The record gives the reactivity of an RNA of 177 nucleotides to 2A3 and DMS.
For 2A3 the reverse transcriptase was SuperScript II with manganese.
Values cover nucleotides 27 to 126.

[RMDB]
RNA sequence: GGGAACGACUCGAGUAGAGUCGAAAAACUGCCGUUACGACGGCAGAUGGGGCUGAGUAGCCCCUACGGGGCGUCGAUGAAAGCUCCGCGUACGCCAGUGGUCAGCAAGUGGUGAUACGUCACCACAAUAAGAGUAGCAGUUCGCUGCUACUCUUAUAAAAGAAACAACAACAACAAC
Reactivity to 2A3 in 0.01 (KOAc 150mM, MgCl2 10mM, bicine 150mM(pH8.5), 24C), signal-to-noise 8, nucleotides 027 to 126: a000c000u000g000c000c000g000u020u030a140c300g020a000c010g070g000c000a000g000a000u040g000g000g000g000c000u030g040a050g230u220a030g060c000c000c000c000u010a060c080g000g000g000g000c020g040u130c060g120a130u190g150a110a080a030g000c010u000c010c000g000c010g010u020a020c050g020c020c000a050g030u070g070g070u090c030a040g030c060a250a100g010u000g000g000u010g000a030u020a060c140g030u010c010a000c010c000a010c000a000
Reactivity to DMS in 0.01 (KOAc 150mM, MgCl2 10mM, bicine 150mM(pH8.5), 24C), signal-to-noise 7, nucleotides 027 to 126: a140c000u000g000c020c000g010u010u010a090c160g030a050c000g000g000c000a000g000a040u020g000g010g000g020c010u010g010a200g030u030a160g010c010c010c010c000u000a010c070g010g020g010g020c020g010u010c140g010a130u020g000a090a110a090g000c010u000c010c010g010c140g010u010a060c110g000c020c020a100g010u020g010g000u010c080a090g010c110a120a080g010u000g000g020u000g000a040u010a080c130g010u000c000a010c000c010a010c000a110